[RMDB]
RNA sequence: GGGAACGACUCGAGUAGAGUCGAAAAAUUACAUCACCUCACUCAUGCUGAGUCAGUACACUGAAUGUAUUCGAAACGGAAUGCUCCUACUCAAUCUCGGUCUACACCGCCCAUACUACCACUUGAUCUUACUUCUGAUGAAAAUCGAGAAUGACAACCGAACUGAAAUCUUCGGAUUUCAGUUCGGAAAAGAAACAACAACAACAAC
Reactivity to 2A3 in 0.01 (KOAc 150mM, MgCl2 10mM, bicine 150mM(pH8.5), 24C), signal-to-noise 2, nucleotides 027 to 156: a000u210u110a060c030a090u100c030a050c000c040u000c000a030c010u050c000a130u110g040c080u120g050a030g040u020c070a030g010u090a030c060a030c090u160g100a160a110u070g010u040a120u060u100c040g090a250a080a050c040g050g030a040a020u040g030c020u020c020c000u040a030c010u080c020a100a130u060c020u020c030g000g000u000c000u050a030c030a020c010c000g010c020c020c000a040u100a080c010u050a080c000c070a030c030u030u040g030a070u050c010u020u150a110c030u150u040c030u020g080a100u050g030a100a030a130a100u130c030g000a000g080a140a080u110g060a050c010a040a040